Background:
An RNA of 177 nucleotides, treated with 2A3 and read out base by base. Values cover nucleotides 27 to 126. 2A3 adducts were read by reverse transcription with SuperScript II with manganese. The reactions ran in a buffer of 150 mM KOAc, 10 mM MgCl2 and 150 mM bicine (pH 8.5), at 24 C.
[RMDB]
RNA sequence: GGGAACGACUCGAGUAGAGUCGAAAAACAUGGAACAUUGGUGUUGAUACAAUCGUAAUAUAGUUUGAAUUGAACUUGUACGUCAGCUCUAAGUUUGCACCGUUAUGAACAAAUGAUUCAUAUGAGAGCCCGUCAGAUCGUUCGCGAUCUGACGGGCAAAAGAAACAACAACAACAAC
Reactivity to 2A3 in 0.01 (KOAc 150mM, MgCl2 10mM, bicine 150mM(pH8.5), 24C), signal-to-noise 1, nucleotides 027 to 126: a000c160a020u170g000g000a000a000c100a190u080u080g000g000u000g030u030u040g070a210u100a230c130a190a280u030c230g030u000a080a090u030a230u000a000g000u000u000u130g300a230a210u160u160g000a080a080c000u000u000g000u000a000c000g000u000c000a000g000c000u060c000u160a080a000g000u080u000u300g030c000a000c000c000g000u000u000a000u000g000a000a010c130a000a180a000u300g270a300u000u000c140a000u000a090u160g230a300g000a130